RNA sequence: GGGAACGACUCGAGUAGAGUCGAAAAGGGAGCUGGUCUGGAUCGGACGGCGCUAGGAGGAGGAGACGGUUUAGAAGCUGCUCUAGCGGGUCGCCCGGCGCGAACCUAACGGGCGUUCUAAGCUCGAAUACCGGUAGGUUUUCGAACCUACCGGUAUAAAAGAAACAACAACAACAAC
Reactivity to DMS in 0.01 (KOAc 150mM, MgCl2 10mM, bicine 150mM(pH8.5), 24C), signal-to-noise 4, nucleotides 027 to 126: g000g020g010a060g030c060u000g020g020u000c040u000g000g000a080u000c100g000g010a100c080g010g000c070g010c060u000a070g000g000a120g000g000a090g010g000a100g000a120c100g000g000u000u000u000a050g010a070a060g010c080u010g010c030u000c010u010a120g010c170g000g000g000u000c010g000c010c010c120g010g020c120g000c030g000a040a060c020c030u000a090a160c160g010g010g010c020g000u000u000c040u000a050a050g000c010u000c060g010a170
Reactivity to 2A3 in 0.01 (KOAc 150mM, MgCl2 10mM, bicine 150mM(pH8.5), 24C), signal-to-noise 2, nucleotides 027 to 126: g040g000g020a060g030c060u090g020g100u070c050u070g040g010a100u080c040g070g020a040c030g000g000c020g000c040u040a030g030g040a030g000g020a040g000g000a020g010a000c030g000g000u030u030u030a080g010a080a010g100c300u100g000c010u050c010u050a070g050c060g010g000g000u020c000g040c020c030c000g150g000c060g000c000g030a050a040c000c010u030a050a040c040g000g000g040c010g000u030u000c000u030a050a000g020c050u060c080g060a030